[RMDB]
RNA sequence: GGGAACGACUCGAGUAGAGUCGAAAACGGCGGUGCGUGGAUGGACAGGUCGAAACGUCGCGAGCACUUCUGGUGGGGGUUUGGAUGGGAGAAUCUCGGUGUCAGAUAGCUGGGAGGUCCGAUACGGCGAUAAAAAUAGAUUCGUCUAUUUUUAUCGAAAAGAAACAACAACAACAAC
Reactivity to 2A3 in 0.01 (KOAc 150mM, MgCl2 10mM, bicine 150mM(pH8.5), 24C), signal-to-noise 4, nucleotides 027 to 126: c020g040g010c020g020g040u050g010c030g020u070g030g040a070u040g020g010a010c020a030g050g000u040c020g030a050a000a000c030g020u020c010g010c020g010a020g010c030a020c010u080u040c030u050g010g010u060g020g010g000g000g000u040u080u070g030g010a030u020g010g010g000a050g010a020a030u030c020u000c020g010g000u020g010u000c000a000g020a070u080a010g000c020u020g000g010g010a010g010g020u000c000c000g000a010u030a060c030g020g000
Reactivity to DMS in 0.01 (KOAc 150mM, MgCl2 10mM, bicine 150mM(pH8.5), 24C), signal-to-noise 8, nucleotides 027 to 126: c090g010g000c060g000g010u010g010c060g030u010g000g010a080u010g010g010a060c090a080g000g010u020c070g000a050a000a090c090g010u010c030g010c050g010a110g010c080a060c060u010u000c050u010g000g020u020g010g000g000g000g000u010u010u020g010g010a100u020g000g000g000a080g010a080a060u010c040u000c040g010g000u010g000u000c090a080g010a100u030a100g010c030u010g000g010g010a080g000g000u010c020c020g000a100u010a050c120g000g010